[RMDB]
RNA sequence: GGGAACGACUCGAGUAGAGUCGAAAAUAAUGCAGUCAUUCCAACAUCCGUGGCUCUCCUGUGCUGCAUUAGACCCACCAAUGCUGAAAGUUUCACUGAGACCAUGUCGUACCUUUGGGGGAAUAGCAUCCACCAUACUGUUCGCAGUAUGGUGGAUAAAAGAAACAACAACAACAAC
Reactivity to DMS in 0.01 (KOAc 150mM, MgCl2 10mM, bicine 150mM(pH8.5), 24C), signal-to-noise 4, nucleotides 027 to 126: u000a040a020u000g000c000a020g020u000c100a130u000u000c060c020a100a110c110a110u000c110c120g010u000g020g010c160u000c030u000c050c130u000g010u010g000c020u000g000c000a010u010u000a020g010a150c020c010c010a090c190c120a070a050u010g030c020u020g000a060a060a090g020u010u010u000c040a090c070u010g000a120g020a060c030c030a040u000g010u000c050g010u010a040c030c020u000u000u000g020g000g010g010g000a110a080u000a070g030c170
Reactivity to 2A3 in 0.01 (KOAc 150mM, MgCl2 10mM, bicine 150mM(pH8.5), 24C), signal-to-noise 3, nucleotides 027 to 126: u020a000a010u020g020c020a020g060u070c010a070u120u060c060c040a030a050c030a210u140c060c100g090u050g050g030c040u040c020u020c070c050u060g020u070g030c010u000g020c000a000u000u010a020g040a040c020c040c000a030c010c020a060a100u140g070c020u130g070a100a110a160g010u050u080u070c070a080c050u050g010a010g020a040c010c010a050u060g040u070c030g040u030a090c010c000u020u110u140g010g000g000g010g000a030a040u060a060g040c030